Conditions: 150 mM KOAc, 10 mM MgCl2 and 150 mM bicine (pH 8.5), 24 C. An RNA of 207 nucleotides, treated with 2A3 and DMS and read out base by base.
RNA sequence: GGGAACGACUCGAGUAGAGUCGAAAAUCUCGUUCUCUCGAGAACGAUCGAACACUCGUGAGAUCGAGAACGUUCUCGAACGAACACUCUCACACACACGUGAGAACGAGAUCGUGUGUUCACGAACGAGUGAUCGUGUUCGAGUUCGUGAGUUCGACUAUAUUGAACCAUUCGUGGUUCAAUAUAGAAAAGAAACAACAACAACAAC
Reactivity to 2A3 in 0.01 (KOAc 150mM, MgCl2 10mM, bicine 150mM(pH8.5), 24C), signal-to-noise 9, nucleotides 027 to 156: u010c000u000c000g000u000u010c000u010c000u010c010g010a020g030a140a120c100g080a180u190c100g070a080a030c050a010c040u010c000g000u020g020a030g010a010u010c010g010a000g010a030a020c010g010u010u000c000u000c000g000a020a010c000g000a030a000c010a010c010u000c000u010c010a030c000a000c000a000c000a000c060g020u090g030a090g060a060a050c120g070a040g020a090u050c010g010u010g000u000g000u050u090c120a080c150g040a100a010c080g000a030g000u010g030a100u040c050g030u030g100u130u010c010g000a010g000u010u010c030g000u050g070a090g010u030u050c020g010a010
Reactivity to DMS in 0.01 (KOAc 150mM, MgCl2 10mM, bicine 150mM(pH8.5), 24C), signal-to-noise 5, nucleotides 027 to 156: u000c010u000c010g020u000u000c010u000c030u000c030g000a040g010a070a130c060g020a070u000c060g010a110a140c120a160c020u000c020g010u000g010a100g010a090u000c000g000a040g010a050a050c050g010u000u000c010u000c000g020a140a080c060g010a050a090c040a050c030u000c020u000c020a180c080a090c030a050c060a030c020g030u000g000a170g000a080a120c110g020a180g010a060u000c010g030u010g010u000g010u040u000c040a120c070g010a070a090c080g000a140g010u000g010a050u000c020g030u000g020u000u000c020g020a220g020u000u000c010g020u000g000a080g020u000u000c020g010a300

The 2A3 profile rests on 14,989 reads. Source: RMDB library OK3TST, as collected in RNAgym. The DMS profile rests on 13,318 reads. Values cover nucleotides 27 to 156.